[RMDB]
RNA sequence: GGGAACGACUCGAGUAGAGUCGAAAACUCCACGCUGGGUAAUGGACGACGGCGGCAUGUGGCGAACAGGGAUACCGGUAGUCAGUGUCUGGAACAUCCCAAGGGGCGGCGGAGCUAGCACCCCGACAAAACGGGCACAAGUUCGCUUGUGCCCGAACUUUAGGACAAGCUUCGGCUUGUCCUAAAGAAAAGAAACAACAACAACAAC
Reactivity to 2A3 in 0.01 (KOAc 150mM, MgCl2 10mM, bicine 150mM(pH8.5), 24C), signal-to-noise 1, nucleotides 027 to 156: c000u000c000c020a030c060g040c030u060g050g020g030u140a120a110u110g030g040a060c050g000a000c020g050g020c010g000g030c050a010u120g050u040g030g030c040g070a090a030c040a090g080g060g030a070u140a170c020c000g000g080u040a020g020u010c000a010g010u020g050u150c020u050g000g010a030a020c020a060u040c000c030c020a070a090g040g000g000g000c000g000g000c020g010g050a060g040c000u010a000g000c000a050c000c000c000c000g000a030c060a000a150a000a020c000g000g000g050c010a000c000a000a010g020u070u090c110g080c120u000u000g000u000g000c000c000c000g000a000a000